Source information
Chemical mapping of a 177-nucleotide RNA with DMS and 2A3. It was measured as part of the RMDB libraries RFM100 and RFMREP. For 2A3 the reverse transcriptase was SuperScript II with manganese.

[RMDB]
RNA sequence: GGGAACGACUCGAGUAGAGUCGAAAACUGCCUUAAACUAAUGAGUAAGGAAAACAAAGCGAGCGGUGGGAGCCGCUCGCCGCGCUUCUAAGUAAUCAUGCGCAAUAAUUUGUGGAGGGGUAAUAGGUCUAACCUACUACUUCGGUAGUAGGUUAGAAAAAGAAACAACAACAACAAC
Reactivity to DMS in 0.01 (KOAc 150mM, MgCl2 10mM, bicine 150mM(pH8.5), 24C), signal-to-noise 4, nucleotides 027 to 126: c050u000g000c010c010u010u020a050a080a150c050u020a150a070u030g000a080g010u000a080a110g000g000a040a030a110a110c060a040a230a070g000c010g000a000g020c010g000g020u000g020g070g000a250g020c000c020g020c000u010c000g010c000c040g020c240g010c080u010u020c070u000a090a120g010u040a070a060u020c060a020u020g000c040g000c050a130a050u020a050a080u030u020u000g000u000g010g000a120g010g000g000g000u000a040a080u020a060g010g000
Reactivity to 2A3 in 0.01 (KOAc 150mM, MgCl2 10mM, bicine 150mM(pH8.5), 24C), signal-to-noise 5, nucleotides 027 to 126: c010u040g030c010c000u130u080a120a150a030c060u080a120a090u170g060a040g080u040a080a040g050g030a100a060a010a040c060a020a090a010g000c000g000a000g000c010g020g010u050g030g090g080a080g020c000c030g000c020u000c000g000c000c000g000c000g010c000u080u030c050u170a090a130g060u090a130a090u110c070a070u160g010c010g000c030a010a040u140a090a060u070u090u100g040u030g040g040a050g040g010g010g030u050a080a080u050a170g080g000